[RMDB]
RNA sequence: GGGAACGACUCGAGUAGAGUCGAAAAGAUAUGGACUGACUUCGAUAAGCUAGGGUCGGAAACGACCUUUAGCUUUUGACGAAGGAUGUCCUAAGUCAAAAGACAUUUGUGUUCGCACAAAUGUCAACUUAUGGGGGUGGUUCGCCACCCCCAUAAGAAAAGAAACAACAACAACAAC
Reactivity to DMS in 0.01 (KOAc 150mM, MgCl2 10mM, bicine 150mM(pH8.5), 24C), signal-to-noise 1, nucleotides 027 to 126: g010a000u000a300u000g000g020a000c000u010g010a300c000u000u000c000g020a140u010a010a000g010c010u000a030g010g000g000u000c000g040g030a030a050a180c000g010a020c000c000u000u000u000a000g020c010u000u000u000u000g010a170c070g000a010a000g010g000a200u000g010u000c000c000u000a040a040g000u000c040a120a070a070a190g010a020c000a000u000u000u000g030u000g000u000u000c200g010c000a010c000a000a000a000u000g000u000c000a030a050